[RMDB]
RNA sequence: GGGAACGACUCGAGUAGAGUCGAAAAAAUAAUUGGCGAAACUCGUUUCGCGUUGGCUGCCUAAUUCAAGGAAUUAGCGUGCCUUCAUGCUAAGGGUUUGAUAUCUGCUAAAACCCGGAGCAUUCAUAAGACUUUUGCUUGUUCGCAAGCAAAAGAAGGUACCAUUUAGAUUCGUCUAAAUGGUACCAAAAGAAACAACAACAACAAC
Reactivity to DMS in 0.01 (KOAc 150mM, MgCl2 10mM, bicine 150mM(pH8.5), 24C), signal-to-noise 2, nucleotides 027 to 156: a120a110u010a030a170u000u010g030g020c020g000a180a130a030c040u000c100g020u000u000u000c000g020c000g020u000u000g010g040c030u000g000c140c030u000a040a040u010u000c010a110a200g010g030a060a040u000u000a080g000c040g010u010g020c010c020u000u000c060a030u000g010c040u000a110a230g000g020g010u000u020u000g000a230u000a110u010c070u010g000c170u000a180a030a010a050c010c000c000g030g030a090g000c010a050u000u000c030a120u000a140a180g000a170c000u000u000u000u000g020c010u000u000g030u000u000c300g010c030a010a000g000c000a020a010a020a020g030a040a100
Reactivity to 2A3 in 0.01 (KOAc 150mM, MgCl2 10mM, bicine 150mM(pH8.5), 24C), signal-to-noise 5, nucleotides 027 to 156: a000a010u290a030a040u100u070g030g000c000g010a020a030a040c040u040c080g030u000u020u010c020g000c000g020u010u010g000g000c030u090g050c020c030u010a010a000u020u030c120a250a140g140g020a080a000u010u000a020g020c040g070u030g000c010c000u010u030c030a020u010g000c000u010a030a030g000g000g020u030u010u010g070a050u120a120u220c170u210g050c020u100a020a020a010a010c000c000c000g000g000a000g000c020a010u050u070c030a040u070a200a110g080a110c000u010u010u000u010g000c000u010u000g010u060u040c120g000c120a000a000g000c000a000a000a000a000g010a020a040